[RMDB]
RNA sequence: GGGAACGACUCGAGUAGAGUCGAAAAGCGGUGGCGAUUGCGGUGGCAUCGGUGGCCAGCGCCUCAUCGACGCGUUCAUGGUUGAUCCGCUUGCCGAUGUGUUCUUCCAUCCACAUGCGGGCGCCGCAAUUUCCCAACAUUUCGAUGUUGGGAAAUUAAAAGAAACAACAACAACAAC
Reactivity to DMS in 0.01 (KOAc 150mM, MgCl2 10mM, bicine 150mM(pH8.5), 24C), signal-to-noise 5, nucleotides 027 to 126: g010c030g010g000u000g000g010c050g000a070u010u020g010c040g000g010u020g000g000c030a050u010c040g010g010u010g000g040c020c050a060g010c020g020c040c120u010c120a070u040c100g000a030c130g020c060g020u010u000c130a100u030g000g010u010u000g000a080u030c080c030g000c050u000u010g010c040c270g000a030u010g000u030g000u030u040c100u020u020c030c020a080u020c030c050a090c060a020u020g010c030g000g000g000c010g000c010c010g000c090
Reactivity to 2A3 in 0.01 (KOAc 150mM, MgCl2 10mM, bicine 150mM(pH8.5), 24C), signal-to-noise 8, nucleotides 027 to 126: g020c020g010g060u080g100g040c020g060a130u030u150g020c040g060g020u020g020g000c010a020u030c060g070g020u080g050g010c010c010a030g020c000g010c010c020u060c030a130u080c040g030a050c050g020c030g110u130u110c080a090u140g090g000u040u110g050a120u040c030c000g010c050u050u090g000c020c000g000a040u020g100u010g050u090u060c050u180u020c010c010a030u040c020c010a030c010a070u160g120c040g020g030g010c010g000c010c000g000c010
About this RNA
The data come from the RNA Mapping Database (RMDB), library OK1LIB. Structure probing data (DMS and 2A3) for a 177-nucleotide construct. DMS adducts were read by reverse transcription with MarathonRT. The DMS profile rests on 13,297 reads.